[RMDB]
Annotation
An RNA of 177 nucleotides, treated with DMS and 2A3 and read out base by base. For DMS the reverse transcriptase was MarathonRT. The reactions ran in a buffer of 150 mM KOAc, 10 mM MgCl2 and 150 mM bicine (pH 8.5), at 24 C. The DMS profile rests on 20,698 reads.
RNA sequence: GGGAACGACUCGAGUAGAGUCGAAAAUGGCGGUCCUUGGAAUAAAAGUUCCAAAUCCGGCCAGAAGGGUGCCUGGCUGUUUUGCUUUUGGCAUGGGGGUGUCCCAUAGCUGGUAGGUGCAUUUUGGCGAUAAAUAAAAUUUCGAUUUUAUUUAUCGAAAAGAAACAACAACAACAAC
Reactivity to DMS in 0.01 (KOAc 150mM, MgCl2 10mM, bicine 150mM(pH8.5), 24C), signal-to-noise 5, nucleotides 027 to 126: u010g000g010c010g000g000u010c160c050u000u000g010g010a020a030u010a060a100a150a170g010u010u000c000c000a010a020a050u010c030c010g010g000c010c000a010g000a100a090g000g010g020u000g000c020c020u010g010g000c020u010g000u010u020u010u020g000c040u010u020u020u040g000g020c050a040u000g000g000g010g000g030u020g000u020c010c000c010a060u020a080g010c020u000g010g010u010a040g010g010u000g010c060a110u000u000u010u020g000g030
Reactivity to 2A3 in 0.01 (KOAc 150mM, MgCl2 10mM, bicine 150mM(pH8.5), 24C), signal-to-noise 9, nucleotides 027 to 126: u070g010g010c010g010g000u030c030c010u010u000g010g020a010a010u100a150a240a080a020g060u010u000c000c000a000a010a020u020c010c020g140g030c010c010a010g030a030a040g060g030g010u040g020c010c000u020g050g000c020u030g090u080u090u110u120g030c010u050u080u150u170g040g000c010a030u040g010g000g000g010g070u100g080u120c010c000c000a010u060a030g010c020u020g020g040u050a050g000g040u040g020c060a080u030u060u060u180g070g040

Reactivities are given for positions 27 through 126.